[RMDB]
RNA sequence: GGGAACGACUCGAGUAGAGUCGAAAAUGGGCACUGUCUCAGCCAUGAGCUCGGUGAAAUUGUAGUAUCGGUGAAGAUGCCGGUUACCCGCUACGGGACGAAAAGACCCCGUGAACCUUUACUAUAGCCUAUCGGGUAGUUUCGACUACCCGAUAGGAAAAGAAACAACAACAACAAC
Reactivity to DMS in 0.01 (KOAc 150mM, MgCl2 10mM, bicine 150mM(pH8.5), 24C), signal-to-noise 1, nucleotides 027 to 126: u010g020g010g000c040a030c000u010g000u020c000u000c000a050g000c100c160a080u060g000a080g010c060u000c000g020g000u030g010a020a070a080u020u020g010u000a010g000u000a000u020c010g000g030u010g000a150a060g000a120u020g000c040c030g000g000u000u060a150c070c030c030g000c120u020a050c020g000g000g000a080c060g020a070a040a140a070g010a100c110c000c000c000g030u000g000a200a090c020c010u000u000u020a020c040u000a040u010a110g000
Reactivity to 2A3 in 0.01 (KOAc 150mM, MgCl2 10mM, bicine 150mM(pH8.5), 24C), signal-to-noise 5, nucleotides 027 to 126: u130g000g010g020c040a020c030u060g010u010c020u010c020a030g030c060c020a180u200g020a000g010c050u050c040g000g040u030g030a060a090a160u120u090g030u030a050g010u010a040u030c020g000g040u060g080a130a040g060a110u250g040c030c000g000g000u040u060a060c020c000c000g050c020u030a010c000g000g000g030a020c050g100a100a050a060a080g080a090c030c000c000c000g010u020g020a010a030c010c000u040u130u070a110c040u050a030u160a120g030

This 177-nucleotide RNA was probed chemically with DMS and 2A3. DMS (dimethyl sulfate) methylates the pairing face of unpaired adenines and cytosines. The reactions ran in a buffer of 150 mM KOAc, 10 mM MgCl2 and 150 mM bicine (pH 8.5), at 24 C. Source: RMDB library RFM100, as collected in RNAgym. The DMS profile rests on 3,028 reads. For 2A3 the reverse transcriptase was SuperScript II with manganese. For DMS the reverse transcriptase was MarathonRT.